The data come from the RNA Mapping Database (RMDB), library OK2TST. The record gives the reactivity of an RNA of 177 nucleotides to DMS. The DMS profile rests on 811 reads. The reactions ran in a buffer of 150 mM KOAc, 10 mM MgCl2 and 150 mM bicine (pH 8.5), at 24 C. Values cover nucleotides 27 to 126.
RNA sequence: GGGAACGACUCGAGUAGAGUCGAAAAAUGGUUUUCCACAGCGCGAAGCAAUCAAAAAUCAGCAUGUCCGAUCCUUCACUUCGUCAGGGAAUGCUUUCAAAAAAAUGACCCGCUUCAAUGGGAGCGAUAAUUAGCCAGCAUUCGUGCUGGCUAAUUAAAAAGAAACAACAACAACAAC
Reactivity to DMS in 0.01 (KOAc 150mM, MgCl2 10mM, bicine 150mM(pH8.5), 24C), signal-to-noise 1, nucleotides 027 to 126: a140u030g010g020u000u000u000u020c000c030a120c170a070g060c080g030c000g010a060a070g040c070a080a060u030c110a000a060a110a110a070u000c080a030g060c070a070u010g030u000c050c030g020a080u000c060c040u010u000c140a100c070u000u000c040g000u020c070a060g000g020g030a130a060u000g000c030u020u000u000c020a010a000a060a030a040a120a110u000g000a150c080c040c000g000c120u000u010c080a080a110u010g010g010g010a040g000c030g010a110